[RMDB]
RNA sequence: GGGAACGACUCGAGUAGAGUCGAAAAGAUAUGGAUCUGUCUCGCAACAGCCGUAAAGAGUGGAUCGGAAACGAUCCACGGACAUGCGACGACAGAUCCUAAGUCAAAAGACACGUUCGCGUGUCAACUCUUCCCUCAGGUUCGCCUGAGGGAAGAGAAAAGAAACAACAACAACAAC
Reactivity to DMS in 0.01 (KOAc 150mM, MgCl2 10mM, bicine 150mM(pH8.5), 24C), signal-to-noise 2, nucleotides 027 to 126: g000a050u000a300u000g010g000a000u010c000u010g020u010c010u020c000g030c000a180a100c230a100g020c080c100g050u000a080a080a080g000a280g010u000g010g010a000u010c000g020g000a070a060a080c000g000a030u000c000c000a000c000g000g000a070c080a220u010g000c000g000a040c250g010a040c000a010g000a000u020c000c000u000a000a050g010u000c030a080a110a150a080g020a010c000a010c020g020u020u000c280g100c020g000u010g000u000c010a110a070
Reactivity to 2A3 in 0.01 (KOAc 150mM, MgCl2 10mM, bicine 150mM(pH8.5), 24C), signal-to-noise 2, nucleotides 027 to 126: g000a020u050a020u090g000g020a010u000c000u010g010u020c010u010c010g000c010a000a300c080a300g250c070c160g150u230a170a130a040g220a100g020u050g000g000a000u010c000g000g000a030a070a000c020g000a000u000c000c000a000c040g000g010a010c020a130u300g010c010g000a060c120g010a030c030a000g000a000u040c010c000u030a000a000g000u000c000a010a030a070a110g000a000c000a000c030g030u070u090c300g000c040g110u020g010u000c010a000a060